[RMDB]
RNA sequence: GGGAACGACUCGAGUAGAGUCGAAAAGGCAAUUACUUCGGUAAUUGCCAUAUAAACUUGAGAAAAGAAGGGCGCAACUCAAGAAAAUUGCGAAAUAAACAAACAACGAGAGCUUCGGCUCUCGUAACCCACAUACUAAGUUCGCUUAGUAUGUGGGAAAAGAAACAACAACAACAAC
Reactivity to 2A3 in 0.01 (KOAc 150mM, MgCl2 10mM, bicine 150mM(pH8.5), 24C), signal-to-noise 3, nucleotides 027 to 126: g010g000c000a000a010u010u010a010c020u050u140c260g010g000u010a000a000u000u000g000c000c000a000u000a000u000a000a010a010c000u030u050g020a010g060a040a200a040a040g120a030a090g060g020g050c040g020c040a010a030c010u010c070a070a010g110a100a130a050a070u120u140g060c050g070a000a030a100u240a060a150a030c090a030a060a010c020a020a020c010g010a000g010a000g000c010u050u060c230g060g000c000u020c000u000c000g000u000a000a000
Reactivity to DMS in 0.01 (KOAc 150mM, MgCl2 10mM, bicine 150mM(pH8.5), 24C), signal-to-noise 2, nucleotides 027 to 126: g010g020c000a020a000u000u000a000c010u000u020c190g030g000u000a000a010u000u030g000c000c000a020u000a020u000a090a090a180c040u000u000g000a060g010a090a060a090a110g010a090a070g000g000g030c030g000c080a100a070c050u000c040a030a060g000a080a040a090a090u010u000g000c120g000a100a090a080u020a090a050a050c110a080a110a070c220a110a010c000g000a020g020a020g030c000u010u010c160g040g010c000u000c000u000c000g000u000a010a050

Source: RMDB library M2PK50, as collected in RNAgym. An RNA of 177 nucleotides, treated with 2A3 and DMS and read out base by base. For DMS the reverse transcriptase was MarathonRT. The DMS profile rests on 1,622 reads.